[RMDB]
About this RNA:
Structure probing data (DMS and 2A3) for a 207-nucleotide construct. The reactions ran in a buffer of 150 mM KOAc, 10 mM MgCl2 and 150 mM bicine (pH 8.5), at 24 C. For DMS the reverse transcriptase was MarathonRT. The data come from the RNA Mapping Database (RMDB), library ARCHII. The DMS profile rests on 5,607 reads.

RNA sequence: GGGAACGACUCGAGUAGAGUCGAAAACUUGGUGGGCUAAUUUCUGACUUGCCCUAUCCAAGCUUAGAGUUGGAUCAUGUGGCCCAAUUGAAGAAAUGGACUACUUGAUUCGUAAAGUGGGGCGGAAUGCGUGAGGCUGGUUUCACAGAGCAGUGAAUCUAUUUAGGACGUUCGCGUCCUAAAUAGAAAAAGAAACAACAACAACAAC
Reactivity to DMS in 0.01 (KOAc 150mM, MgCl2 10mM, bicine 150mM(pH8.5), 24C), signal-to-noise 2, nucleotides 027 to 156: c010u010u010g010g020u000g000g010g020c010u020a010a070u000u000u000c130u010g020a080c130u010u010g000c020c010c010u000a060u000c010c000a030a060g030c030u000u010a160g000a160g020u000u010g020g000a020u010c030a020u000g010u010g010g030c010c000c000a030a230u000u010g010a140a160g000a060a060a130u000g000g010a010c000u000a000c000u000u010g010a030u000u010c000g010u000a050a070a130g020u010g010g000g010g000c040g000g010a080a090u010g010c050g000u000g000a070g020g000c050u000g040g000u010u010u010c050a060c030a160g010a120g000c040a100g020u000g010a070a210
Reactivity to 2A3 in 0.01 (KOAc 150mM, MgCl2 10mM, bicine 150mM(pH8.5), 24C), signal-to-noise 2, nucleotides 027 to 156: c010u010u010g000g020u030g010g010g000c040u070a070a130u110u200u120c100u170g140a120c080u040u120g000c020c000c000u020a030u030c010c000a010a000g020c030u080u120a070g010a050g100u120u130g010g000a020u010c010a000u030g020u000g000g020c000c000c020a090a190u050u110g070a120a100g030a070a040a050u050g000g000a030c020u010a000c010u010u010g000a000u050u010c020g040u070a030a060a060g040u080g010g010g010g030c010g020g040a090a050u100g030c030g010u020g020a020g040g000c020u040g000g060u010u040u040c040a050c020a020g040a000g010c050a010g050u020g060a020a040